[RMDB]
RNA sequence: GGGAACGACUCGAGUAGAGUCGAAAAGAAAAAGAGCACGAGAGACGAUAUCGAAGGCCUAAGAUAUCGAUAAUGUCUCGAGUAGUGGAUACGAAGGCCUAAGUAUCGACUACGAGUGCUCGAAAAAGGGAUAUUAUACCUUCGGGUAUAAUAUCCCAAAAGAAACAACAACAACAAC
Reactivity to DMS in 0.01 (KOAc 150mM, MgCl2 10mM, bicine 150mM(pH8.5), 24C), signal-to-noise 3, nucleotides 027 to 126: g050a100a020a040a150a070g020a020g040c020a010c010g000a270g010a010g000a040c000g000a030u000a000u000c040g010a070a280g000g000c020c000u030a150a260g020a120u010a050u000c000g010a020u020a020a070u000g000u030c030u010c030g000a090g000u000a040g020u020g000g000a020u000a010c000g010a180a060g000g010c000c010u000a070a170g000u000a000u000c010g020a060c010u000a020c000g000a170g010u000g000c000u010c000g000a020a030a000a120a090
Reactivity to 2A3 in 0.01 (KOAc 150mM, MgCl2 10mM, bicine 150mM(pH8.5), 24C), signal-to-noise 3, nucleotides 027 to 126: g220a000a070a010a000a010g000a000g000c010a000c020g050a060g000a010g010a020c050g020a030u010a010u060c020g010a010a010g000g010c010c010u090a130a100g100a160u300a120u060c010g000a000u020a040a040u090g010u010c000u010c010g000a000g010u020a000g000u010g100g010a000u000a010c000g000a030a010g020g000c020c010u020a080a000g010u000a000u030c040g030a000c000u080a020c010g030a000g010u000g000c000u000c000g010a000a000a000a000a000